[RMDB]
RNA sequence: GGGAACGACUCGAGUAGAGUCGAAAAGACUAGAUCUACCAUCGCAGUACUGGCGGGGCACGUAUUGUAACGGCGGGCUUGCGAUGGAGCCUGCCACCUACCGGCCCAGCCCAUGGUUAUCGUCCGGACGGCGAGGGGACACGUGGUUAGGCGGGAGCCCGAGGAUACCUUUCGAGGUAUCCUCGGGAAAAGAAACAACAACAACAAC
Reactivity to 2A3 in 0.01 (KOAc 150mM, MgCl2 10mM, bicine 150mM(pH8.5), 24C), signal-to-noise 2, nucleotides 027 to 156: g080a020c100u090a020g000a240u040c030u060a040c010c000a030u020c020g000c000a040g000u120a300c040u050g000g170c060g000g000g060g000c040a070c190g130u160a100u210u240g040u110a090a030c040g090g010c000g000g000g020c060u080u150g020c070g030a020u020g010g000a000g000c000c000u000g030c030c000a000c000c010u080a040c020c000g120g000c000c000c000a010g010c000c020c000a030u090g020g010u120u110a250u300c070g060u030c010c000g000g000a020c000g000g050c010g060a170g020g020g000g020a040c050a020c130g020u080g000g010u040u100a080g000g010c020g000g000g010a020g110
Source: RMDB library OK3TST, as collected in RNAgym.
Structure probing data (2A3) for a 207-nucleotide construct.
Conditions: 150 mM KOAc, 10 mM MgCl2 and 150 mM bicine (pH 8.5), 24 C.